RNA sequence: GGGAACGACUCGAGUAGAGUCGAAAAACUGAGAAUGGGAUGAGAGUCAGGGAUGGGAUAGAAGUCAGUCACCAUCUGGCAGGCAGACACAACCAGGAGUCACAUGUUUAUCAUACAUAUUUAUCUCAGAAAGUGCUAUCAAUCAUUUUGAGCAAAACUAUCGUCAGGGUUUCGACCCUGACGAUAGAAAAGAAACAACAACAACAAC
Reactivity to 2A3 in 0.01 (KOAc 150mM, MgCl2 10mM, bicine 150mM(pH8.5), 24C), signal-to-noise 1, nucleotides 027 to 156: a000c090u120g000a050g030a030a040u060g020g010g170a080u090g060a020g000a010g090u040c060a090g120g000g020a030u020g040g010g090a020u020a120g140a090a000g000u080c060a010g070u050c010a040c110c000a020u100c100u000g040g000c040a010g010g000c010a000g000a060c000a020c000a010a020c040c090a050g010g010a030g090u070c020a020c030a090u120g110u040u140u090a170u130c000a020u090a000c010a020u020a070u000u180u230a120u060c030u000c030a020g030a030a030a140g020u100g120c050u110a110u220c020a120a020u020c050a080u220u180u100u070g020a020g040c040a000a000a000a060

An RNA of 207 nucleotides, treated with 2A3 and read out base by base. For 2A3 the reverse transcriptase was SuperScript II with manganese. Source: RMDB library OK3TST, as collected in RNAgym.